[RMDB]
The data come from the RNA Mapping Database (RMDB), libraries RFM100 and RFMREP. Chemical mapping of a 177-nucleotide RNA with 2A3 and DMS. The RNA was probed in 150 mM KOAc, 10 mM MgCl2 and 150 mM bicine (pH 8.5) at 24 C. Values are in units of 0.01, from 0 to 300, in steps of 10. Values cover nucleotides 27 to 126. 2A3 adducts were read by reverse transcription with SuperScript II with manganese. The 2A3 profile rests on 1,205 reads.
RNA sequence: GGGAACGACUCGAGUAGAGUCGAAAAAGCCAGUGCAGUACGCUGCACUGGCAACAGUGUGUUUCAAGCCAUGAUCUGGAGUCAAGGUGUUAGUGAUUCCUACGGAGCAGGAUACGUCCUGCUCCGAAGAACUGCGUAAUUUCGAUUACGCAGUUCUAAAAGAAACAACAACAACAAC
Reactivity to 2A3 in 0.01 (KOAc 150mM, MgCl2 10mM, bicine 150mM(pH8.5), 24C), signal-to-noise 2, nucleotides 027 to 126: a010g000c000c000a000g000u000g030c010a000g010u050a020c220g010c170u000g000c010a000c020u000g000g020c000a000a000c010a000g030u080g010u000g000u020u010u010c080a050a040g060c070c060a040u060g010a010u040c040u140g200g050a070g120u030c010a060a040g000g010u060g140u200u170a080g040u050g090a000u030u000c010c000u000a030c000g000g000a000g030c000a000g000g030a030u080a070c270g020u000c030c000u010g000c000u000c000c000g000a000
Reactivity to DMS in 0.01 (KOAc 150mM, MgCl2 10mM, bicine 150mM(pH8.5), 24C), signal-to-noise 2, nucleotides 027 to 126: a100g050c010c000a020g070u000g030c000a010g000u000a090c300g010c000u000g000c000a010c010u010g050g030c000a010a010c120a090g000u000g000u000g010u010u000u000c050a080a210g010c010c020a030u020g010a030u010c090u020g000g000a050g010u000c030a050a070g000g010u000g000u000u000a140g000u010g000a180u000u000c000c000u010a160c000g000g010a020g020c000a000g000g010a070u000a060c190g000u000c000c020u010g000c000u010c000c000g020a040